[RMDB]
RNA sequence: GGGAACGACUCGAGUAGAGUCGAAAAAGGUAUGUGAUCAAUAUAUGUGCGAAAUGCAUUAACAUGUAGUAACUUGAAAUUUGGCAACUCAGGAGAAUUGUGCCCAUCCACUGUAGAAGCAGGAUUCUUUGAAAUCGAACCACACUUAGUUGAGAGGAGUGAUUAUGUGGUUCGCCACAUAAUCACUAAAAGAAACAACAACAACAAC
Reactivity to DMS in 0.01 (KOAc 150mM, MgCl2 10mM, bicine 150mM(pH8.5), 24C), signal-to-noise 1, nucleotides 027 to 156: a020g040g050u010a040u000g030u000g010a150u000c010a080a150u010a120u020a040u050g040u010g010c030g000a140a100a080u030g000c080a100u000u000a150a110c100a040u020g020u000a010g010u000a090a050c070u000u000g010a080a030a120u000u010u000g050g010c050a010a050c010u000c040a080g000g000a180g010a090a040u000u000g040u000g020c050c000c010a060u000c020c050a050c050u010g030u000a100g000a090a100g020c050a040g060g000a090u000u000c040u000u020u000g000a050a070a080u000c050g020a040a090c050c000a000c040a030c140u010u000a100g050u000u000g000a100g000a190g080g000
Reactivity to 2A3 in 0.01 (KOAc 150mM, MgCl2 10mM, bicine 150mM(pH8.5), 24C), signal-to-noise 3, nucleotides 027 to 156: a000g070g030u100a080u100g090u050g050a080u120c080a080a030u050a040u030a060u190g030u030g020c060g060a140a090a070u180g010c030a010u070u090a080a060c060a060u080g040u060a030g010u030a060a030c010u020u050g140a040a020a030u060u050u040g040g000c020a050a000c090u030c080a030g000g060a020g020a040a070u040u090g040u070g070c000c000c010a030u010c010c030a030c010u030g020u090a040g020a120a000g030c010a010g100g080a040u040u010c010u110u060u130g110a120a040a020u080c060g010a030a010c040c030a040c020a010c100u090u120a040g020u030u090g060a040g000a010g160g010
Chemical mapping of a 207-nucleotide RNA with DMS and 2A3. For DMS, 1,890 sequencing reads were counted. It was measured as part of the RMDB library OK3TST. 2A3 adducts were read by reverse transcription with SuperScript II with manganese. In probing experiments dimethyl sulfate is read out at A N1 and C N3, which are open when not base-paired. The reactions ran in a buffer of 150 mM KOAc, 10 mM MgCl2 and 150 mM bicine (pH 8.5), at 24 C.